[RMDB]
Chemical mapping of a 207-nucleotide RNA with 2A3. Values cover nucleotides 27 to 156.
RNA sequence: GGGAACGACUCGAGUAGAGUCGAAAAUGCAUUAGCAGCUUAAUUUAGCGCUGCUCAUCCUUCCUCAAUUGCCCACGGUUGAGAGUAAGGGUGUCAUUUAAAAGUGGGGAACCGAGCCUAGCAAAGCUUUGAGCUAGGAACGGAAUUUAUGAAGCUUCUGCUUACUAUUGUUCGCAAUAGUAAGCAGAAAAGAAACAACAACAACAAC
Reactivity to 2A3 in 0.01 (KOAc 150mM, MgCl2 10mM, bicine 150mM(pH8.5), 24C), signal-to-noise 5, nucleotides 027 to 156: u120g010c030a040u090u080a000g000c010a000g010c020u100u150a210a110u300u280u260a160g060c080g000c030u000g000c000u000c000a010u010c000c010u000u010c000c000u010c000a000a000u030u000g010c000c000c000a000c000g000g000u000u000g000a020g010a030g030u230a010a010g000g010g030u080g030u030c010a040u030u150u240a100a140a010a010g000u000g000g000g000g010a010a000c000c000g000a010g020c000c000u000a000g000c000a000a010a030g000c000u010u010u010g010a010g000c000u000a010g000g000a000a000c000g000g060a000a020u170u200u080a060u060g110a010a000g000c000u000u000

For 2A3 the reverse transcriptase was SuperScript II with manganese.